This 177-nucleotide RNA was probed chemically with DMS and 2A3. Reactivities are given for positions 27 through 126. The reactions ran in a buffer of 150 mM KOAc, 10 mM MgCl2 and 150 mM bicine (pH 8.5), at 24 C. The DMS profile rests on 6,369 reads.
[RMDB]
RNA sequence: GGGAACGACUCGAGUAGAGUCGAAAAGAUAUGGAGAUUAUACGAGCGUUGAAAGUGGACUCGGAAACGAGUCGUAACAUCUGGAGCUCGUAAUCUCCUAAGUCAAAGUGCGUCUUCGGACGCACAACGAAUCAUACCUGUUCGCAGGUAUGAUUCGAAAAGAAACAACAACAACAAC
Reactivity to DMS in 0.01 (KOAc 150mM, MgCl2 10mM, bicine 150mM(pH8.5), 24C), signal-to-noise 4, nucleotides 027 to 126: g000a020u010a110u010g000g000a020g020a010u000u000a080u010a080c040g010a000g020c010g020u000u000g010a060a160a150g010u000g010g010a010c000u000c000g000g000a020a030a070c000g010a010g010u000c000g020u010a050a100c050a050u010c060u010g010g000a060g020c010u000c000g000u000a010a000u000c000u000c000c000u000a000a060g000u000c010a080a080a140g010u000g010c000g000u000c000u010u020c240g020g000a010c000g020c000a000c010a010a060
Reactivity to 2A3 in 0.01 (KOAc 150mM, MgCl2 10mM, bicine 150mM(pH8.5), 24C), signal-to-noise 4, nucleotides 027 to 126: g010a010u020a010u030g020g000a010g010a000u020u090a110u090a300c030g000a000g010c050g110u300u300g090a050a020a020g020u030g040g000a000c010u000c000g000g000a000a000a010c000g000a010g000u000c010g000u130a040a030c010a060u200c120u290g120g100a080g000c010u000c000g010u000a000a000u020c000u000c000c000u000a020a000g010u000c040a140a070a030g010u010g010c010g000u000c000u040u100c300g110g000a000c000g000c000a000c000a000a000